[RMDB]
RNA sequence: GGGAACGACUCGAGUAGAGUCGAAAAGUAUCCCUAGAUGAUAAAACACCGCACAUGGCUCGUAAGAGCGGUUAAAUUAGCAAGUAAUGCAAAUUACGCGAGGUAACGCAUGGCCUCGGCUCGUUAGAAAAGGGAGAAUCCUUCGGGAUUCUCCCAACAAGAGGUACUACUUCGGUAGUACCUCUUGAAAAGAAACAACAACAACAAC
Reactivity to 2A3 in 0.01 (KOAc 150mM, MgCl2 10mM, bicine 150mM(pH8.5), 24C), signal-to-noise 2, nucleotides 027 to 156: g010u050a090u060c000c000c010u070a170g050a160u160g040a110u170a190a110a020a010c090a010c010c040g020c000a010c020a110u180g150g000c030u010c080g040u050a070a220g040a010g030c030g020g020u050u120a060a090a100u090u080a080g000c080a140a000g040u180a140a000u170g000c020a010a080a050u100u020a050c080g000c000g050a000g000g000u010a100a070c030g020c190a090u130g030g000c000c000u010c000g000g000c030u050c030g100u000u030a100g070a160a100a100a100g030g000g000a010g010a000a010u000c010c010u030u150c180g010g000g010a010u010u010c000u000c000c000c010a000a000
Reactivity to DMS in 0.01 (KOAc 150mM, MgCl2 10mM, bicine 150mM(pH8.5), 24C), signal-to-noise 2, nucleotides 027 to 156: g000u010a090u010c020c000c000u000a160g020a130u010g030a150u000a060a080a080a130c030a110c010c020g000c040a170c070a190u000g000g080c040u000c050g010u010a110a170g000a080g040c000g000g000u000u000a100a070a150u000u000a080g040c060a110a140g060u010a040a030u000g010c160a090a060a110u000u010a020c040g000c050g000a050g060g000u000a050a100c100g010c110a050u000g000g000c000c000u000c020g000g000c020u000c070g010u000u000a110g000a070a060a190a130g020g010g040a050g010a020a040u000c000c010u020u010c200g070g010g000a010u010u000c020u000c000c010c010a000a010
Source: RMDB library M2RFPK, as collected in RNAgym. Chemical mapping of a 207-nucleotide RNA with 2A3 and DMS. As a SHAPE reagent, 2A3 marks flexible, mostly unpaired nucleotides at the ribose 2'-OH. For 2A3 the reverse transcriptase was SuperScript II with manganese. DMS adducts were read by reverse transcription with MarathonRT. The DMS profile rests on 2,779 reads.